[RMDB]
RNA sequence: GGGAACGACUCGAGUAGAGUCGAAAAAAAAGAUAUGGAUAUCGAACUACUUCCUUUACACACGAAGAACUAUGAUCGGAAACGAUCAUAGGGAGUGUGUAUAGGAAGCGAUAUCCUAAGUCAAAAACAAUUAACAAAAGUUCGCUUUUGUUAAUUGAAAAGAAACAACAACAACAAC
Reactivity to DMS in 0.01 (KOAc 150mM, MgCl2 10mM, bicine 150mM(pH8.5), 24C), signal-to-noise 3, nucleotides 027 to 126: a080a060a110a120g000a020u000a070u010g000g000a030u000a010u000c000g000a060a020c040u020a300c010u000u000c000c000u000u000u000a010c010a010c010a000c010g030a110a210g000a090a200c000u000a000u000g010a010u000c000g010g000a010a010a040c000g010a010u000c000a000u000a010g000g020g010a000g020u000g010u000g010u010a000u000a000g010g010a000a000g000c000g000a010u000a000u000c000c000u010a000a040g000u000c010a070a060a080a130a170
Reactivity to 2A3 in 0.01 (KOAc 150mM, MgCl2 10mM, bicine 150mM(pH8.5), 24C), signal-to-noise 2, nucleotides 027 to 126: a010a000a120a010g020a000u040a020u060g010g000a000u000a000u020c010g010a020a020c030u250a060c020u300u010c000c000u010u020u010a010c020a010c000a010c030g300a300a020g000a000a000c000u000a000u020g000a010u010c000g030g000a000a010a010c010g000a010u000c000a000u000a000g000g020g000a020g000u010g000u000g000u010a000u020a000g000g000a000a000g010c000g000a000u000a000u000c000c000u000a010a010g010u000c020a020a000a060a090a140